[RMDB]
RNA sequence: GGGAACGACUCGAGUAGAGUCGAAAAGAUAGUUCUUGACCAAGACAAGUUCACGGAUCGUUACACCAUCAAGAGUGGAACCACUUAUGAGAAAGCUGUAAGGGAUAUUCUAAAAAGUGCUGGCAUCUCGAAAAUAAACAUCGAGUUUACAGGGAACCCGUUAGAUGAUGUUCGCAUCAUCUAACGGAAAAGAAACAACAACAACAAC
Reactivity to 2A3 in 0.01 (KOAc 150mM, MgCl2 10mM, bicine 150mM(pH8.5), 24C), signal-to-noise 3, nucleotides 027 to 156: g060a020u110a040g050u040u050c030u090u050g050a040c050c010a020a020g040a020c020a030a000g010u000u040c020a020c070g010g000a020u020c010g080u080u190a100c100a070c100c050a050u160c100a130a000g020a000g010u010g010g010a010a000c010c000a030c010u050u040a010u020g030a020g010a130a080a000g000c040u010g060u180a010a020g030g020g010a030u020a090u080u060c000u040a010a040a030a000a000g010u030g020c020u030g070g000c020a070u040c000u010c010g040a070a130a030a040u210a120a130a020c030a040u010c010g000a000g000u050u060u090a040c020a000g000g000g060a010a020c000
Reactivity to DMS in 0.01 (KOAc 150mM, MgCl2 10mM, bicine 150mM(pH8.5), 24C), signal-to-noise 1, nucleotides 027 to 156: g000a070u000a100g030u000u000c030u010u000g000a090c050c020a110a220g030a080c010a070a160g020u010u010c000a190c100g010g000a050u000c010g000u020u000a210c140a170c010c050a100u000c040a050a300g010a080g030u000g000g020a010a020c000c010a060c040u000u000a070u020g000a020g000a160a080a070g030c020u000g040u010a110a040g000g010g000a020u000a010u000u000c040u000a010a020a020a010a060g010u000g000c040u000g000g030c050a070u010c010u000c010g000a090a070a090a120u010a040a090a090c090a240u010c040g010a090g050u000u010u010a110c030a060g010g010g010a020a130c200
The data come from the RNA Mapping Database (RMDB), library OK3TST. This 207-nucleotide RNA was probed chemically with 2A3 and DMS. The RNA was probed in 150 mM KOAc, 10 mM MgCl2 and 150 mM bicine (pH 8.5) at 24 C. For 2A3 the reverse transcriptase was SuperScript II with manganese. Values are in units of 0.01, from 0 to 300, in steps of 10. For DMS, 1,815 sequencing reads were counted. Values cover nucleotides 27 to 156. For DMS the reverse transcriptase was MarathonRT.